[RMDB]
RNA sequence: GGGAACGACUCGAGUAGAGUCGAAAAUUCAGCUAGAUUGGGAUUUGGUCUUCAGCCUCUGCUACUCCAGUUAAUGAGACCUCUUAUUAUGCUGAGUAUCAGCGAUACCAUUCUGUUAACUGUGAAGGUGACGGCACUUAUUCGUAAGUGCCGUCACAAAAGAAACAACAACAACAAC
Reactivity to DMS in 0.01 (KOAc 150mM, MgCl2 10mM, bicine 150mM(pH8.5), 24C), signal-to-noise 1, nucleotides 027 to 126: u000u000c100a050g040c010u020a060g020a070u000u020g000g000g000a120u000u000u010g010g030u000c010u020u000c060a100g000c030c100u000c050u010g000c040u010a070c030u010c070c000a040g000u000u000a030a010u000g030a040g000a110c150c280u000c020u000u010a090u000u000a090u020g020c000u000g000a090g000u000a070u000c000a040g020c170g010a050u010a090c050c000a020u000u020c030u000g010u000u000a050a040c060u000g000u000g030a110a140g000
Reactivity to 2A3 in 0.01 (KOAc 150mM, MgCl2 10mM, bicine 150mM(pH8.5), 24C), signal-to-noise 1, nucleotides 027 to 126: u020u000c000a000g010c020u060a000g020a140u000u080g030g010g000a060u080u010u100g080g000u000c060u050u040c070a010g010c020c020u070c030u020g000c030u060a040c040u000c020c010a010g000u000u070a080a020u130g030a010g020a140c000c000u110c020u060u010a110u060u010a070u190g000c020u000g040a030g050u070a070u080c000a010g000c030g040a020u000a040c020c020a070u050u000c070u000g110u100u020a000a000c030u010g090u040g210a140a080g180